[RMDB]
RNA sequence: GGGAACGACUCGAGUAGAGUCGAAAAAGCUGUUGCAGUGUAAGUUAUGGGUAGAUCUGAUCUCACGUAAAGGUCGUAAAAUCGUAAUCGUACAUACAAAUCUAUUAAACGGAUACAACUCGAGAUACCGUCUUGAAGUUUUCGAACUUCAAGACGGAAAAGAAACAACAACAACAAC
Reactivity to 2A3 in 0.01 (KOAc 150mM, MgCl2 10mM, bicine 150mM(pH8.5), 24C), signal-to-noise 2, nucleotides 027 to 126: a050g040c020u010g000u020u000g000c060a080g040u000g060u170a010a000g030u050u070a060u130g000g000g000u050a010g020a080u020c020u000g000a030u070c000u020c000a030c000g020u030a000a000a090g050g000u000c020g000u000a000a110a000a000u010c030g000u150a040a000u130c050g110u200a000c000a010u130a100c020a060a160a010u030c040u060a040u050u110a190a000a000c130g010g000a000u010a170c030a050a030c020u000c020g000a000g030a020u070a030
Reactivity to DMS in 0.01 (KOAc 150mM, MgCl2 10mM, bicine 150mM(pH8.5), 24C), signal-to-noise 2, nucleotides 027 to 126: a000g000c110u000g000u030u020g020c070a060g070u000g000u010a050a090g000u050u000a000u010g000g020g030u020a020g000a010u000c020u000g000a060u020c080u000c050a030c140g040u000a030a140a040g060g000u000c020g000u010a010a010a070a040u000c020g000u020a030a010u020c100g010u020a030c060a040u000a070c140a000a020a100u010c060u010a160u010u030a030a040a020c160g000g000a080u020a100c050a050a030c120u000c000g000a030g020a090u020a060